[RMDB]
RNA sequence: GGGAACGACUCGAGUAGAGUCGAAAAUGUCCCGUGCGAAGGGCUCAGCGUGGUGAUGAUGGGCACGAUCCGCUUUUAGCCGGGUUAGCCGUUCAGUGAUCGGCGUCCGAGAGUUGCCGCUCUCGGGCUCGGUUUAUCGGUUCGCCGAUAAACCGAGAAAAGAAACAACAACAACAAC
Reactivity to 2A3 in 0.01 (KOAc 150mM, MgCl2 10mM, bicine 150mM(pH8.5), 24C), signal-to-noise 3, nucleotides 027 to 126: u180g100u040c000c000c000g020u030g020c040g030a100a040g020g010g000c010u010c030a000g000c010g040u060g020g090u030g040a090u020g000a040u060g050g030g000c020a000c070g030a040u020c000c000g020c080u010u080u010u100a000g020c030c020g010g010g020u040u050a010g000c000c010g010u050u050c050a100g040u010g090a030u040c020g010g020c020g080u000c000c000g000a000g000a030g010u050u300g120c030c040g000c010u020c000u000c000g020g000g000
Reactivity to DMS in 0.01 (KOAc 150mM, MgCl2 10mM, bicine 150mM(pH8.5), 24C), signal-to-noise 2, nucleotides 027 to 126: u020g000u010c000c000c000g010u010g030c050g040a100a100g010g000g010c040u000c030a090g000c060g010u000g010g040u020g000a070u010g000a050u000g000g010g020c030a080c110g010a040u010c030c030g000c050u010u010u020u010a100g030c050c010g000g000g010u010u030a070g010c020c000g000u000u000c040a140g020u030g010a060u010c020g010g000c040g020u000c010c000g010a030g000a040g000u010u040g010c220c160g000c000u000c000u010c000g010g000g000
An RNA of 177 nucleotides, treated with 2A3 and DMS and read out base by base. It was measured as part of the RMDB libraries RFM100 and RFMREP. For DMS the reverse transcriptase was MarathonRT.